[RMDB]
RNA sequence: GGGAACGACUCGAGUAGAGUCGAAAAAGAAGCACGCAGGUACACCACACCCAAUUGGUGGGAGAGUAGUAAUGGCCGGGAGUAUUUACCGUGAGUGACAACUCCAACAAUGGAUGCUAAGUAGUUAAAAAUCAUCCACGUUCGCGUGGAUGAUUUUAAAAGAAACAACAACAACAAC
Reactivity to DMS in 0.01 (KOAc 150mM, MgCl2 10mM, bicine 150mM(pH8.5), 24C), signal-to-noise 1, nucleotides 027 to 126: a080g000a110a060g010c030a000c050g030c070a030g010g010u000a160c040a100c030c020a080c070a100c000c020c070a140a100u000u000g000g010u030g000g000g030a060g030a070g050u010a040g020u020a010a160u010g030g000c070c030g000g000g000a120g020u010a030u010u010u000a030c050c010g000u000g010a140g000u010g010a110c170a090a040c040u000c030c010a010a010c050a060a050u010g000g010a040u000g020c070u000a080a090g030u010a100g030u010u010a020

The record gives the reactivity of an RNA of 177 nucleotides to DMS. DMS adducts were read by reverse transcription with MarathonRT.